An RNA of 207 nucleotides, treated with 2A3 and DMS and read out base by base. The RNA was probed in 150 mM KOAc, 10 mM MgCl2 and 150 mM bicine (pH 8.5) at 24 C. For DMS the reverse transcriptase was MarathonRT. As a SHAPE reagent, 2A3 marks flexible, mostly unpaired nucleotides at the ribose 2'-OH. The DMS profile rests on 1,786 reads.
[RMDB]
RNA sequence: GGGAACGACUCGAGUAGAGUCGAAAAACCUUAUUUUGAGAAGCUGAGGGAUUUGGCCCAUAGAAGCUUCAGCAACCGACUUUAACUAGCACGGUGCUAAUACCAACGAGCAACUCGAAUGAUAAGUAAAACGUUGACAAGUUCGCUUGUCAACGAAGGUGGUAAUACAGUUCGCUGUAUUACCACCAAAAGAAACAACAACAACAAC
Reactivity to 2A3 in 0.01 (KOAc 150mM, MgCl2 10mM, bicine 150mM(pH8.5), 24C), signal-to-noise 3, nucleotides 027 to 156: a010c080c010u120u140a260u050u120u080u110g100a040g000a010a000g000c000u010g000a020g000g000g020a050u030u070u030g020g000c010c000c000a060u130a130g030a000a000g010c000u010u010c010a000g000c000a020a020c020c000g010a030c020u010u000u090a090a050c240u050a030g020c000a010c040g000g090u000g000c010u000a000a050u050a090c010c000a080a030c040g040a040g080c070a110a100c120u030c030g100a060a050u080g050a090u070a060a090g040u070a040a140a060a010c010g020u000u010g000a000c020a010a000g000u040u020c070g020c140u000u000g000u000c000a000a000c000g000a030a000
Reactivity to DMS in 0.01 (KOAc 150mM, MgCl2 10mM, bicine 150mM(pH8.5), 24C), signal-to-noise 1, nucleotides 027 to 156: a050c020c020u000u000a090u020u010u010u000g000a060g010a040a260g040c100u000g020a100g010g020g020a120u000u000u000g020g000c010c020c050a180u020a110g000a170a060g020c010u010u000c020a080g000c000a050a060c020c000g010a080c020u010u000u000a100a300c100u000a000g050c020a090c030g010g120u010g010c010u010a090a090u000a070c010c020a040a020c090g010a130g020c080a070a260c000u010c030g060a020a050u000g040a130u000a050a120g060u000a060a060a130a210c020g000u000u000g000a010c010a000a030g010u000u000c250g010c000u000u000g000u000c010a000a000c000g020a000a020